[RMDB]
RNA sequence: GGGAACGACUCGAGUAGAGUCGAAAAGGAGGCUUCGGCCUCCAAAAAUCCCGCCAAGGGAAGAUAUCUGUAUGAUAAAUAUAAAUGUCUUUUCCAGGGUUAUGGAUAAAAGGUCUCUUCGGAGACCCUUGAAAUAUAGGUUCGCCUAUAUUUCAAGAAAAGAAACAACAACAACAAC
Reactivity to DMS in 0.01 (KOAc 150mM, MgCl2 10mM, bicine 150mM(pH8.5), 24C), signal-to-noise 2, nucleotides 027 to 126: g000g020a020g000g030c020u010u010c210g030g000c000c010u000c000c000a010a020a090a160a150u000c000c000c100g000c060c030a020a030g010g000g000a000a030g000a020u000a000u000c040u010g000u010a030u000g000a300u030a100a090a020u020a000u000a000a030a010u000g010u000c000u000u010u000u000c000c010a130g000g000g010u000u010a080u030g000g000a160u020a030a120a140a120g000g000u000c000u000c000u000u030c200g040g000a020g000a020c000c010

Structure probing data (DMS) for a 177-nucleotide construct. High DMS reactivity at an A or C suggests that its Watson-Crick edge is free. Values cover nucleotides 27 to 126.